[RMDB]
RNA sequence: GGGAACGACUCGAGUAGAGUCGAAAAACGGUCAUCAUACGUGAUGACCGAACGGACUGAUGAAUUUAAUCUCAUGGAAUCUCAUUCGUCUGAAUAAUUCUGAUGAGACUUAUUAUCUGACUGUUAAAUGACCACUAUUUUUCGAAAUAGUGGUCAUAAAAGAAACAACAACAACAAC
Reactivity to 2A3 in 0.01 (KOAc 150mM, MgCl2 10mM, bicine 150mM(pH8.5), 24C), signal-to-noise 9, nucleotides 027 to 126: a000c010g000g010u000c000a000u000c000a010u010a100c260g090u040g010a000u000g000a000c000c000g000a010a000c010g010g040a020c020u050g010a010u020g050a060a080u050u130u120a070a050u010c000u000c010a000u010g010g030a010a010u030c160u030c180a040u070u030c040g260u150c300u250g000a000a010u040a020a020u010u000c020u040g270a060u010g000a010g000a000c010u070u080a040u030u020a020u020c020u030g040a060c000u010g050u060u070a060a250
Reactivity to DMS in 0.01 (KOAc 150mM, MgCl2 10mM, bicine 150mM(pH8.5), 24C), signal-to-noise 6, nucleotides 027 to 126: a220c010g000g000u000c000a000u000c000a040u020a100c200g040u010g000a010u000g010a010c010c000g000a010a010c030g010g000a120c020u010g000a020u000g020a010a140u010u020u030a060a130u000c010u000c010a020u000g000g000a030a010u000c220u010c210a030u000u000c040g010u040c270u030g010a010a010u000a060a030u000u000c000u010g010a030u000g000a000g000a020c080u000u010a030u000u000a030u000c010u000g000a100c020u010g010u000u010a080a110